An RNA of 207 nucleotides, treated with DMS and read out base by base. In probing experiments dimethyl sulfate is read out at A N1 and C N3, which are open when not base-paired.
[RMDB]
RNA sequence: GGGAACGACUCGAGUAGAGUCGAAAAACGGACUACGGUCCGAAGGGUUCGGGGUACUAGUGUGAAUGCCCGGCUAGUACCAUGUGCUAGUGGUUUAUCUACUGAUGUUCAAUUAAGGGCAUUUGAAAAAAGACUCCUAACUUCGGUUAGGAGUCAAGUUCCUUAGAAAGUUCGCUUUCUAAGGAACAAAAGAAACAACAACAACAAC
Reactivity to DMS in 0.01 (KOAc 150mM, MgCl2 10mM, bicine 150mM(pH8.5), 24C), signal-to-noise 2, nucleotides 027 to 156: a110c040g010g010a030c010u000a120c260g040g020u000c010c010g000a030a090g000g050g040u000u000c040g020g010g020g030u000a020c020u000a010g020u000g070u000g010a040a040u000g000c000c000c010g000g020c010u000a020g000u000a020c000c030a120u000g020u000g000c050u010a080g040u000g020g010u000u000u010a090u010c020u010a180c050u000g010a080u010g010u010u010c070a040a140u000u010a140a100g010g000g010c000a020u010u010u000g000a010a020a070a110a110a160g000a020c010u000c000c000u000a000a020c010u000u010c290g030g020u000u000a000g010g000a010g010u000c010a000a050